The data come from the RNA Mapping Database (RMDB), library M2PK50.
Structure probing data (2A3 and DMS) for a 177-nucleotide construct.
RNA sequence: GGGAACGACUCGAGUAGAGUCGAAAAUCAUGGUGGUUCGCCACCAUGAACUGUCUAGUCGCUAGAAAACGAUCAAAACUAGCGACUACACUAACGAUCGAACUGGGGGACAGUUCGCUGUCCCCAAGACUAAGGUCCUGUUCGCAGGACCUUAGUCAAAAGAAACAACAACAACAAC
Reactivity to 2A3 in 0.01 (KOAc 150mM, MgCl2 10mM, bicine 150mM(pH8.5), 24C), signal-to-noise 2, nucleotides 027 to 126: u040c010a010u000g010g000u000g010g030u030u030c160g090c040c000a010c010c000a010u000g000a000a030c010u010g010u000c000u000a000g000u010c000g000c000u000a000g010a060a090a040a090c070g080a130u110c060a040a040a020a170c000u000a000g000c010g000a000c000u010a000c000a000c000u190a210a040c050g120a070u100c020g020a110a050c170u210g090g000g000g010g010a000c000a010g020u040u060c170g010c060u010g000u010c000c000c000c000a010a000
Reactivity to DMS in 0.01 (KOAc 150mM, MgCl2 10mM, bicine 150mM(pH8.5), 24C), signal-to-noise 2, nucleotides 027 to 126: u020c000a040u000g010g040u000g030g030u000u010c240g030c000c000a000c000c000a000u000g010a010a110c100u000g010u000c080u000a000g010u000c020g020c000u000a010g010a140a070a100a110c110g010a090u020c140a110a060a120a180c010u000a000g050c030g000a010c020u010a010c070a020c090u000a050a110c210g020a060u010c090g000a100a100c150u000g000g010g010g000g000a010c000a000g010u000u000c220g010c010u010g000u000c000c000c000c040a020a010
The 2A3 profile rests on 2,203 reads.
For DMS the reverse transcriptase was MarathonRT.
For DMS, 1,069 sequencing reads were counted.
As a SHAPE reagent, 2A3 marks flexible, mostly unpaired nucleotides at the ribose 2'-OH.
The RNA was probed in 150 mM KOAc, 10 mM MgCl2 and 150 mM bicine (pH 8.5) at 24 C.